[RMDB]
RNA sequence: GGGAACGACUCGAGUAGAGUCGAAAAUCCUUCCUUCGGGAAGGACAACUCUCCUAAGUCAAGCGGUAGGUGUAGAAUGCGGGAGUCGGAAACGACAUCGAUCGCACUACACCUAUAAUCGCUUGAUAUGGACAUGCUGCUACGUUCGCGUAGCAAAUGAAACGCUUACGUUCGCGUAAGCGUUUCAAAAAGAAACAACAACAACAAC
Reactivity to 2A3 in 0.01 (KOAc 150mM, MgCl2 10mM, bicine 150mM(pH8.5), 24C), signal-to-noise 1, nucleotides 027 to 156: u020c000c010u000u000c000c000u000u160c300g080g000g000a030a030g000g000a000c000a040a070c000u060c010u010c020c000u050a150a050g040u040c000a000a000g000c000g020g090u010a000g000g010u010g010u000a050g070a300a180u030g010c020g010g020g020a030g000u000c010g000g020a110a060a080c000g010a030c000a050u100c040g140a110u060c000g010c000a000c000u000a000c000a000c010c010u010a000u000a000a010u100c010g000c000u000u000g000a000u000a050u040g000g020a020c030a100u100g060c110u030g000c000u000a000c000g070u120u120c300g000c010g130u000a000g000c010a000a000a010
An RNA of 207 nucleotides, treated with 2A3 and read out base by base. 2A3 adducts were read by reverse transcription with SuperScript II with manganese. The data come from the RNA Mapping Database (RMDB), library RNAMAK. Conditions: 150 mM KOAc, 10 mM MgCl2 and 150 mM bicine (pH 8.5), 24 C. The 2A3 profile rests on 776 reads.